[RMDB]
RNA sequence: GGGAACGACUCGAGUAGAGUCGAAAAUCCUAAGUCGAGUGCGAAAGUCACGCGAAGAACUCCAUUGUCAGUCUCGGAAACGAGACUUGGAUUUAUGGAGGGAGCGUGAUGAGUAGCACUCGAUAUGGAAAAACAAGUACGCUUCGGCGUACUUGAACCAUGUACUUUGGUUCGCCAAAGUACAUGGAAAAGAAACAACAACAACAAC
Reactivity to DMS in 0.01 (KOAc 150mM, MgCl2 10mM, bicine 150mM(pH8.5), 24C), signal-to-noise 1, nucleotides 027 to 156: u000c000c000u000a070a170g010u000c000g000a040g030u020g000c010g000a250a300a300g010u000c010a090c030g000c050g010a110a190g000a080a170c010u000c000c000a040u000u000g110u000c050a070g030u000c000u020c000g000g000a220a190a300c020g020a020g020a000c060u000u000g020g000a020u030u000u000a030u010g000g010a040g010g010g000a240g030c000g010u050g000a030u010g000a080g000u000a300g020c000a020c000u010c020g000a000u000a010u010g000g000a070a050a110a110a110c030a040a000g010u000a000c000g050c010u000u000c300g000g000c020g000u000a010c000u020u010g010a050a160
Reactivity to 2A3 in 0.01 (KOAc 150mM, MgCl2 10mM, bicine 150mM(pH8.5), 24C), signal-to-noise 2, nucleotides 027 to 156: u010c000c010u020a070a000g040u000c010g000a000g000u010g010c000g040a070a010a000g030u000c010a010c000g010c010g070a190a080g010a020a010c000u000c000c000a000u030u010g010u020c010a020g000u000c000u000c000g030g080a100a050a060c010g010a010g000a010c000u010u030g010g010a000u080u210u240a010u000g000g000a000g010g000g010a020g000c000g000u010g020a000u010g000a000g010u000a000g000c000a000c000u000c000g000a000u000a000u000g000g010a030a030a010a020a010c000a000a000g040u010a000c000g000c020u040u200c300g110g000c000g000u000a000c000u000u000g000a010a010